Overview: Structure probing data (2A3 and DMS) for a 177-nucleotide construct. The RNA was probed in 150 mM KOAc, 10 mM MgCl2 and 150 mM bicine (pH 8.5) at 24 C. 2A3 adducts were read by reverse transcription with SuperScript II with manganese. For 2A3, 13,935 sequencing reads were counted. The data come from the RNA Mapping Database (RMDB), library TTRDEL.
[RMDB]
RNA sequence: GGGAACGACUCGAGUAGAGUCGAAAAGAUAUGGACGCAAGCGAUGAGCAUGAGGUCGGAAACGACCUAUGCGAGCUUGCGUCCUAAGUCAAAGUGUAAGUAUGAACUUCGGUUCAUACUUACACAAGUGAUAUUGUACGUUCGCGUACAAUAUCACAAAAGAAACAACAACAACAAC
Reactivity to 2A3 in 0.01 (KOAc 150mM, MgCl2 10mM, bicine 150mM(pH8.5), 24C), signal-to-noise 5, nucleotides 027 to 126: g010a020u050a030u110g000g020a000c010g020c010a010a010g010c040g300a300u230g100a130g060c030a010u130g300a030g000g010u010c010g030g000a050a070a000c000g000a000c020c000u000a000u010g000c010g010a000g000c000u000u000g000c000g000u000c000c000u000a000a000g000u000c010a010a030a060g000u000g010u000a000a000g000u010a010u020g000a000a000c030u060u170c300g020g010u000u000c000a000u000a010c000u000u000a000c000a000c000a000a010
Reactivity to DMS in 0.01 (KOAc 150mM, MgCl2 10mM, bicine 150mM(pH8.5), 24C), signal-to-noise 5, nucleotides 027 to 126: g000a030u000a300u010g000g010a020c010g010c000a010a010g010c000g000a140u000g010a200g010c010a010u000g020a040g010g010u000c000g010g010a060a060a220c020g000a010c000c000u000a010u000g000c000g010a100g010c000u000u010g010c020g000u000c000c000u000a010a060g010u010c030a100a100a140g010u000g010u000a000a020g000u000a000u000g000a010a000c000u000u010c180g040g000u000u000c000a000u000a000c000u000u000a000c000a000c000a020a040